This 177-nucleotide RNA was probed chemically with 2A3 and DMS. Source: RMDB libraries RFM100 and RFMREP, as collected in RNAgym. The reactions ran in a buffer of 150 mM KOAc, 10 mM MgCl2 and 150 mM bicine (pH 8.5), at 24 C. 2A3 adducts were read by reverse transcription with SuperScript II with manganese. For DMS the reverse transcriptase was MarathonRT.

[RMDB]
RNA sequence: GGGAACGACUCGAGUAGAGUCGAAAACUCAUAUCGGCUUAAGCCGGUGGCAUGGGUACGUUUAAACAUGUGUAGAGUGCAAAGGUUCCUUAAAAAAGGUUUCAAACUUGCAUUUAAACUACUACAAUGUAGGGCAUGUAUUCGUACAUGCCCUACAAAAAGAAACAACAACAACAAC
Reactivity to 2A3 in 0.01 (KOAc 150mM, MgCl2 10mM, bicine 150mM(pH8.5), 24C), signal-to-noise 1, nucleotides 027 to 126: c000u010c000a010u020a010u060c000g000g030c010u210u250a100a010g000c000c000g000g000u000g060g000c020a000u010g110g040g000u080a050c010g000u060u050u060a120a120a010c140a050u060g020u000g020u080a020g000a000g050u010g040c040a090a000a000g020g010u040u000c010c000u030u050a150a180a100a070a000a000g060g000u000u020u060c160a110a070a010c030u000u000g020c000a010u060u080u040a090a140a040c040u050a010c000u070a050c070a190a170
Reactivity to DMS in 0.01 (KOAc 150mM, MgCl2 10mM, bicine 150mM(pH8.5), 24C), signal-to-noise 3, nucleotides 027 to 126: c030u000c020a040u010a030u020c000g020g000c000u030u010a130a120g020c000c000g050g020u020g030g010c150a060u010g020g000g010u000a050c140g000u010u040u000a040a050a100c150a050u020g000u020g030u010a040g020a090g050u000g000c000a000a010a130g000g000u000u000c010c030u000u000a020a040a100a100a100a040g000g000u000u000u000c210a020a020a240c070u000u000g000c000a050u020u020u010a080a090a150c020u010a090c000u020a080c100a060a060